[RMDB]
RNA sequence: GGGAACGACUCGAGUAGAGUCGAAAAAAUAGAAUAACAAGGCUGUCAAUUUGAGCUUGACGGCUGCAAACCGAAUGGAGUGAAAUCCCUUCUGGAGUGCAGUCUGAUUUGUUAUGCCAUUUUGCAGGCCUGUGUAUAAGUUCGCUUAUACACAGGCAAAAGAAACAACAACAACAAC
Reactivity to 2A3 in 0.01 (KOAc 150mM, MgCl2 10mM, bicine 150mM(pH8.5), 24C), signal-to-noise 1, nucleotides 027 to 126: a000a000u180a020g100a050a080u090a000a030c030a050a000g070g050c020u030g090u170c040a010a030u000u050u220g050a040g050c000u000u040g010a010c010g000g030c000u000g000c000a010a010a010c010c000g000a040a000u060g010g000a040g010u000g020a010a050a090u030c010c010c000u000u060c110u210g030g000a020g010u020g000c000a010g000u000c000u080g080a140u100u050u100g030u050u000a020u100g040c000c020a000u020u010u020u150g030c010a030g100
Reactivity to DMS in 0.01 (KOAc 150mM, MgCl2 10mM, bicine 150mM(pH8.5), 24C), signal-to-noise 2, nucleotides 027 to 126: a020a010u010a030g010a100a020u000a020a030c020a040a030g010g000c040u010g000u010c020a030a070u000u000u010g000a150g020c180u000u000g010a060c090g020g000c000u000g010c000a010a030a040c000c000g000a020a000u010g000g010a020g000u000g020a120a160a200u000c000c000c030u000u000c000u000g050g000a030g030u000g020c000a010g010u010c020u010g000a120u020u000u000g010u010u000a020u000g000c010c010a030u010u000u000u000g010c120a120g020